Chemical mapping of a 207-nucleotide RNA with 2A3. For 2A3, 1,371 sequencing reads were counted. Values cover nucleotides 27 to 156.
RNA sequence: GGGAACGACUCGAGUAGAGUCGAAAAACGAGGAACGCCUCGAAAAUAUGACCGGUGUCAUAGCCUCUAGCACACAGAGGUCGCGUGGGUUCAACUCCCCCCCUUUUCCGAGGGUAUCGGAAACCAAAAAACACAAUUUGGUUCGCCAAAUUGUGAACAGCUAAUGCAAGUUCGCUUGCAUUAGCUGAAAAGAAACAACAACAACAAC
Reactivity to 2A3 in 0.01 (KOAc 150mM, MgCl2 10mM, bicine 150mM(pH8.5), 24C), signal-to-noise 2, nucleotides 027 to 156: a000c060g010a100g090g070a050a010c020g190c070c000u020c010g070a010a020a000a030u030a020u010g020a020c130c180g190g010u250g010u130c020a010u010a010g020c000c000u000c020u040a050g120c070a050c020a010c010a170g000a000g010g010u010c010g010c000g060u040g000g020g000u030u050c020a070a070c060u070c000c010c000c000c000c010c010u040u060u000u000c000c000g000a000g000g000g000u110a020u010c000g000g000a000a000a000c010c010a040a010a060a080a040a000c000a000c000a010a000u000u000u000g010g010u020u010c070g010c050c000a000a000a000u000u000g010u000g000a000a020